Structure probing data (DMS and 2A3) for a 177-nucleotide construct.
RNA sequence: GGGAACGACUCGAGUAGAGUCGAAAAGAUAUGGAAAUGUAGCGAGCUUUGAUCGUCGAUCGGAAACGAUCGACGGGAGCUCCUUACUGUUUCCUAAGUCAAACUUCACUCCUUCGGGAGUGAAGAAUCUCCUUAUACUCUUCGGAGUAUAAGGAGAAAAAGAAACAACAACAACAAC
Reactivity to DMS in 0.01 (KOAc 150mM, MgCl2 10mM, bicine 150mM(pH8.5), 24C), signal-to-noise 3, nucleotides 027 to 126: g000a030u010a040u010g010g000a010a060a050u010g020u010a010g030c290g020a020g030c010u000u010u030g010a030u010c020g000u000c000g000a020u000c010g000g010a020a020a030c010g000a020u000c000g000a020c000g010g000g000a010g030c010u010c010c000u000u000a010c090u010g010u010u000u000c000c000u010a000a150g010u000c010a110a130a250c000u000u000c010a000c000u000c000c000u000u010c250g020g000g020a040g020u000g000a000a000g010a070a080
Reactivity to 2A3 in 0.01 (KOAc 150mM, MgCl2 10mM, bicine 150mM(pH8.5), 24C), signal-to-noise 3, nucleotides 027 to 126: g000a000u000a000u030g000g000a000a030a020u090g020u080a080g080c210g300a010g010c000u300u300u040g010a010u010c000g000u000c000g010a010u010c010g010g000a000a010a000c000g010a010u000c000g040a000c000g020g000g010a000g000c010u000c020c020u030u060a090c070u070g070u000u020u000c000c010u000a010a000g000u000c030a080a120a120c000u000u020c010a010c000u010c000c010u060u120c300g170g010g000a020g010u040g000a000a000g000a000a040

Source: RMDB library TTRDES, as collected in RNAgym. DMS adducts were read by reverse transcription with MarathonRT. Conditions: 150 mM KOAc, 10 mM MgCl2 and 150 mM bicine (pH 8.5), 24 C.